[RMDB]
The record gives the reactivity of an RNA of 177 nucleotides to DMS and 2A3. The reactions ran in a buffer of 150 mM KOAc, 10 mM MgCl2 and 150 mM bicine (pH 8.5), at 24 C. 2A3 is a SHAPE reagent: it acylates the 2'-hydroxyl of flexible nucleotides of all four kinds. Reactivities are rounded to 0.1 and cut off at 0 and 3. For 2A3, 3,706 sequencing reads were counted.
RNA sequence: GGGAACGACUCGAGUAGAGUCGAAAAGAGACGCCGGCGGGGGCCUCGGGAAGAGUUAUCUUUUCUGCUUAACGGCCUGCCAACCCUGGAAUCGGUUCAGCCGGAGGUAGGGUCCAGCGGUCGGAAGGUACUACUAUAUGUUCGCAUAUAGUAGUACAAAAGAAACAACAACAACAAC
Reactivity to DMS in 0.01 (KOAc 150mM, MgCl2 10mM, bicine 150mM(pH8.5), 24C), signal-to-noise 4, nucleotides 027 to 126: g010a200g020a090c090g000c040c030g020g030c110g010g010g020g000g010c030c010u000c110g000g010g000a040a050g010a070g010u010u020a070u010c010u000u010u000u010c040u000g000c130u010u000a090a130c110g000g000c020c010u000g020c040c140a130a110c010c010c020u000g000g020a070a090u000c070g000g000u000u000c220a200g000c000c020g000g000a070g000g000u000a030g010g000g000u000c050c090a110g000c050g010g010u000c020g010g000a090a040g010
Reactivity to 2A3 in 0.01 (KOAc 150mM, MgCl2 10mM, bicine 150mM(pH8.5), 24C), signal-to-noise 3, nucleotides 027 to 126: g040a010g020a010c110g000c100c010g030g030c060g020g020g010g040g030c000c020u010c020g020g010g020a040a020g050a020g050u150u160a130u110c010u050u030u040u010c030u080g070c000u050u030a130a050c020g010g000c000c010u060g030c020c010a030a030c010c010c020u030g070g050a080a050u080c040g000g000u090u130c050a060g070c020c020g030g020a030g030g040u060a020g020g000g000u040c040c030a060g050c050g020g010u020c010g030g020a030a000g080